[RMDB]
RNA sequence: GGGAACGACUCGAGUAGAGUCGAAAAGUUACGCAAAAAGCGUAAUGUUGACCCUUUGUCCAAUUUUGAACAUAAGGUUAUUACAGAGUGCGUUACCAUAGUUUUAGGUGACGCAAUUCAAGUAGCCGGCCACUUAAGUUCGCUUAAGUGAAAAGAAACAACAACAACAAC
Reactivity to DMS in 0.01 (KOAc 150mM, MgCl2 10mM, bicine 150mM(pH8.5), 24C), signal-to-noise 9, nucleotides 027 to 129: g030u000u000a020c020g020c000a060a110a110a150a110g020c000g020u000a020a010u000g030u000u020g010a130c040c000c030u000u010u000g020u010c030c040a080a140u030u030u030u030g020a080a040c070a030u040a070a090g000g000u000u000a080u020u010a090c140a120g010a030g000u000g010c000g010u000u000a000c020c000a130u020a090g030u040u040u030u050a080g000g020u010g000a000c000g000c010a000a000u000u000c050a090a060g000u010a000g010c000c010g000g000c080
Reactivity to 2A3 in 0.01 (KOAc 150mM, MgCl2 10mM, bicine 150mM(pH8.5), 24C), signal-to-noise 9, nucleotides 027 to 129: g000u000u000a000c000g000c030a020a140a150a140a080g000c010g000u000a010a000u060g030u030u180g080a110c000c000c000u050u110u110g100u040c040c030a100a100u090u090u090u270g100a130a060c040a050u130a120a070g030g000u030u030a040u030u100a090c100a050g040a000g030u010g010c000g000u000u000a010c000c010a070u110a180g210u100u110u140u200a040g020g000u000g000a000c000g000c000a010a010u010u010c000a010a010g000u000a000g000c000c000g000g010c000
Structure probing data (DMS and 2A3) for a 170-nucleotide construct.